[RMDB]
RNA sequence: GGGAACGACUCGAGUAGAGUCGAAAAGAGCAAUUCGUUGCUCACAACUCCUAAGUCGACAUGGUCUUGUGAAACUCGCAACAGCGUCUCGGAAACGAGACGACAUGCGAGCCAGCGAGACCAACAGCGAUAUGGAUACGUUAGCUUUCGAGCUAAACGCAUAUACAAGGUUCGCCUUGUAUAUGCGAAAAGAAACAACAACAACAAC
Reactivity to DMS in 0.01 (KOAc 150mM, MgCl2 10mM, bicine 150mM(pH8.5), 24C), signal-to-noise 2, nucleotides 027 to 156: g010a080g040c020a090a090u000u020c180g040u000u000g010c010u020c050a080c070a040a170c070u020c000c000u000a080a150g050u010c000g000a050c000a300u000g040g000u010c000u000u000g000u060g000a210a020a020c010u000c010g010c000a040a060c060a210g010c000g000u000c000u020c020g020g010a170a160a290c020g030a010g020a010c000g040a040c030a300u000g010c000g000a010g060c000c020a300g000c010g010a040g020a000c010c010a020a050c020a100g020c010g020a180u010a190u000g000g000a160u000a080c090g050u000u000a020g000c000u000u000u000c080g040a040g030c010u000a020a050a150
Reactivity to 2A3 in 0.01 (KOAc 150mM, MgCl2 10mM, bicine 150mM(pH8.5), 24C), signal-to-noise 5, nucleotides 027 to 156: g030a010g010c040a020a020u120u140c230g080u170u040g020c000u030c020a070c030a010a070c020u030c010c000u060a150a040g020u010c010g000a210c060a110u080g000g000u000c000u000u030g010u010g040a100a040a010c000u000c000g010c000a030a130c060a240g040c010g000u010c000u000c010g040g030a080a110a060c010g000a000g000a010c000g020a020c000a000u030g010c000g000a000g000c010c010a010g000c000g010a000g000a020c010c000a000a000c000a000g000c000g000a000u020a060u150g050g000a070u080a160c140g110u040u040a010g010c000u130u120u240c300g070a020g000c000u050a070a070a010